[RMDB]
RNA sequence: GGGAACGACUCGAGUAGAGUCGAAAAAGUGGUACAACGAAGUGAGCGUGACGUAUCGGACAUGAAUGCGCGUCCUUGCAGAGCAUCUCAGGAUAUGCUGUCCGCAGUGCAGCGUCAUGUCUGAGAGGGCGCGGCGGAGGUUCGCCUCCGUUGCGCCAAAAGAAACAACAACAACAAC
Reactivity to 2A3 in 0.01 (KOAc 150mM, MgCl2 10mM, bicine 150mM(pH8.5), 24C), signal-to-noise 4, nucleotides 027 to 126: a000g080u070g020g010u080a010c020a050a000c030g050a090a020g100u080g040a040g050c040g020u050g080a100c010g010u040a050u020c010g000g010a020c000a010u110g170a240a030u140g030c010g010c030g060u110c060c030u040u070g020c030a010g010a020g050c020a040u010c050u020c100a070g080g030a080u050a010u130g000c000u020g060u120c050c080g000c060a020g000u030g060c040a030g000c030g010u020c030a000u030g020u020c000u010g000a020g020a020g040
Reactivity to DMS in 0.01 (KOAc 150mM, MgCl2 10mM, bicine 150mM(pH8.5), 24C), signal-to-noise 2, nucleotides 027 to 126: a070g000u010g000g040u000a030c050a090a090c070g000a050a130g010u010g010a010g010c060g020u040g040a170c200g000u010a130u030c010g000g000a010c000a030u020g000a030a000u000g030c020g000c120g010u010c100c020u000u000g010c000a120g000a050g000c030a060u010c090u000c110a130g000g010a060u030a030u010g000c000u000g030u030c080c120g030c000a040g000u010g060c030a080g000c000g030u000c010a000u010g000u000c020u000g010a020g010a030g020

Source: RMDB library OK1LIB, as collected in RNAgym. Chemical mapping of a 177-nucleotide RNA with 2A3 and DMS. The reactions ran in a buffer of 150 mM KOAc, 10 mM MgCl2 and 150 mM bicine (pH 8.5), at 24 C. For DMS, 3,284 sequencing reads were counted. For 2A3, 3,190 sequencing reads were counted.